[RMDB]
RNA sequence: GGGAACGACUCGAGUAGAGUCGAAAAAGGACAUGGCCCGUGAAGCGUUCAUGGAUCUCUUUUAAGGCGGCCAGCCUGGUCCUCGCGCUCUCCGUCCUGUUCGGAUGCGGUGGAGGGGAGAUGGCACCUCACCAGCAUACUUCGGUAUGCUGGUGAGAAAAGAAACAACAACAACAAC
Reactivity to 2A3 in 0.01 (KOAc 150mM, MgCl2 10mM, bicine 150mM(pH8.5), 24C), signal-to-noise 2, nucleotides 027 to 126: a010g060g010a030c020a060u110g020g020c020c020c020g040u060g070a070a010g030c060g100u060u070c080a070u100g040g060a100u000c080u010c000u050u120u070u220a070a000g030g020c050g030g100c110c020a010g060c000c000u030g030g040u010c020c000u020c030g040c000g000c000u000c000u000c040c000g070u080c030c050u110g070u060u050c040g070g010a080u100g060c120g020g130u100g060g050a110g030g020g020g000a090g010a030u060g010g040c020a060c010
Reactivity to DMS in 0.01 (KOAc 150mM, MgCl2 10mM, bicine 150mM(pH8.5), 24C), signal-to-noise 3, nucleotides 027 to 126: a050g010g000a030c040a040u000g010g030c050c130c030g020u010g000a050a090g000c100g030u000u000c090a050u010g010g000a060u000c010u020c080u020u000u000u000a090a100g000g010c020g010g010c130c110a110g000c000c020u000g000g010u000c020c000u000c120g020c070g000c010u000c050u000c020c010g020u000c030c030u020g010u000u020c060g010g010a110u000g010c100g010g000u010g010g000a300g000g000g000g000a060g010a100u010g020g010c050a130c140